RNA sequence: GGGAACGACUCGAGUAGAGUCGAAAAUUGACUGGGCCGUACAACAAAGGGCAUCUAUUGACAUGUCAGACCUGAAGCUGCUAACACCUGCAAGCACAAGCUCAAAUGUCUACCAUAGGCUUCAUGAUACUUUUUCCCAAUUCGUUGGGAAAAAGUAAAAAGAAACAACAACAACAAC
Reactivity to DMS in 0.01 (KOAc 150mM, MgCl2 10mM, bicine 150mM(pH8.5), 24C), signal-to-noise 4, nucleotides 027 to 126: u010u000g000a070c050u000g020g000g020c020c030g020u000a050c090a060a050c100a070a120a100g010g010g030c060a040u000c080u000a100u010u000g030a090c090a060u010g000u010c060a090g030a080c060c040u000g000a060a090g000c020u000g000c070u010a090a060c130a040c120c050u000g000c050a050a060g020c070a060c090a050a100g000c050u000c050a030a070a070u000g020u010c020u000a130c070c070a090u000a070g020g000c060u000u000c050a060u000g010a270
Reactivity to 2A3 in 0.01 (KOAc 150mM, MgCl2 10mM, bicine 150mM(pH8.5), 24C), signal-to-noise 3, nucleotides 027 to 126: u070u000g030a000c000u030g010g040g020c050c030g060u100a050c050a110a020c040a060a160a070g010g010g000c010a030u040c050u120a180u090u130g050a000c030a070u070g030u090c040a040g040a060c020c010u070g020a040a020g020c010u030g000c020u050a070a020c030a050c090c040u040g050c050a030a030g040c020a020c030a060a040g010c010u000c040a070a100a080u060g030u010c010u040a050c030c030a040u090a070g050g000c000u090u080c020a030u080g040a000